RNA sequence: GGGAACGACUCGAGUAGAGUCGAAAACUUGGCCUGAUGACGUCCGUCCUGGUCUGCCCUGAUGGGAAGACGAUUGAGGCUGAGGCCGCUCAUGGGACCGUCACCCGCCACUAUCGGGAGCACCAGAAAUCCUACUAGCGUUCGCGCUAGUAGGAUUAAAAGAAACAACAACAACAAC
Reactivity to 2A3 in 0.01 (KOAc 150mM, MgCl2 10mM, bicine 150mM(pH8.5), 24C), signal-to-noise 2, nucleotides 027 to 126: c030u040u060g000g030c010c020u080g090a120u070g040a050c030g040u040c050c000g040u000c030c080u080g070g000u010c030u050g040c010c010c010u060g160a110u260g030g000g020a040a030g000a000c020g060a070u030u110g110a020g070g000c040u040g040a100g120g060c040c030g080c000u070c030a070u110g000g010g100a130c000c010g000u000c020a100c000c000c000g030c020c060a110c090u080a090u110c020g020g010g010a030g050c030a020c000c010a020g100a050
Reactivity to DMS in 0.01 (KOAc 150mM, MgCl2 10mM, bicine 150mM(pH8.5), 24C), signal-to-noise 2, nucleotides 027 to 126: c080u010u000g020g020c040c040u010g010a070u020g020a080c060g000u000c100c130g030u000c020c030u000g010g010u010c010u010g000c020c000c010u000g020a140u020g000g000g000a190a040g030a020c000g000a180u000u000g010a050g010g010c030u010g010a090g000g000c000c050g000c060u010c110a060u000g020g010g020a080c070c030g000u000c030a040c010c010c130g000c040c040a100c160u010a050u000c050g000g000g000a110g020c110a120c040c040a090g010a100
An RNA of 177 nucleotides, treated with 2A3 and DMS and read out base by base. For 2A3, 2,042 sequencing reads were counted. For DMS, 2,444 sequencing reads were counted. DMS adducts were read by reverse transcription with MarathonRT. Conditions: 150 mM KOAc, 10 mM MgCl2 and 150 mM bicine (pH 8.5), 24 C. Source: RMDB library OK2TST, as collected in RNAgym.